[RMDB]
RNA sequence: GGGAACGACUCGAGUAGAGUCGAAAACGGGGUCGGUGAAACUCCGAACCGGCGGUUACAGUCCGCGACCCGGUCGCCUCCAGCGACCGGUUGACCAGGUGAAAUUCCUGGACCGACGGUUAAAGUCAAAAUCAUCCAACGUUCGCGUUGGAUGAAAGUAAACGUUAAAGUUCGCUUUAACGUUUACAAAAGAAACAACAACAACAAC
Reactivity to DMS in 0.01 (KOAc 150mM, MgCl2 10mM, bicine 150mM(pH8.5), 24C), signal-to-noise 1, nucleotides 027 to 156: c010g040g070g090g030u020c050g040g050u020g000a150a260a210c040u000c010c000g000a020a040c070c000g000g000c000g020g000u000u020a080c110a080g010u000c010c020g000c020g010a170c300c010c020g000g010u000c010g000c000c030u000c190c120a180g020c050g050a010c010c020g000g000u000u000g000a040c000c010a000g020g000u010g000a040a300a230u020u000c010c000u030g000g000a010c000c040g000a040c020g030g020u010u000a020a080a120g020u000c020a020a040a110a220u000c000a010u000c000c010a000a020c000g040u000u000c280g000c070g030u000u000g000g020a020u000g020a010a030a130